An RNA of 177 nucleotides, treated with 2A3 and DMS and read out base by base.

[RMDB]
RNA sequence: GGGAACGACUCGAGUAGAGUCGAAAAACUGCGGUAUUCGUACCGCAGUACAUAAAAAGGAUAAAAUACCAGUAGCCCGAAACGCAAGCGAGCUCUACUGGCGCAAGAACCACUUCGGUGGUUCUAAGCAGAACUCAACAUUCGUGUUGAGUUCUGCAAAAGAAACAACAACAACAAC
Reactivity to 2A3 in 0.01 (KOAc 150mM, MgCl2 10mM, bicine 150mM(pH8.5), 24C), signal-to-noise 3, nucleotides 027 to 126: a010c000u010g010c010g030g000u020a040u030u060c180g030u040a010c000c000g000c000a000g000u010a000c000a000u300a040a110a020a010a040g140g000a080u170a190a170a100a030u160a110c010c010a000g010u020a000g060c000c020c020g030a130a110a040c070g010c100a040a090g060c010g080a020g030c020u000c010u030a010c000u010g000g000c030g040c040a040a020g000a010a000c000c010a000c020u040u090c260g090g000u000g000g000u000u000c000u010a010a000
Reactivity to DMS in 0.01 (KOAc 150mM, MgCl2 10mM, bicine 150mM(pH8.5), 24C), signal-to-noise 3, nucleotides 027 to 126: a030c000u000g000c000g000g020u000a030u000u010c170g020u000a010c020c000g000c000a000g010u010a000c150a070u010a020a080a050a080a100g000g000a120u020a090a090a070a060u010a090c010c010a050g010u010a020g010c120c000c000g020a050a080a050c220g020c180a110a140g010c020g000a070g000c030u020c070u000a010c020u000g010g010c070g020c150a100a000g010a000a000c000c000a010c000u000u010c220g020g020u000g010g000u000u000c000u000a020a100
DMS adducts were read by reverse transcription with MarathonRT.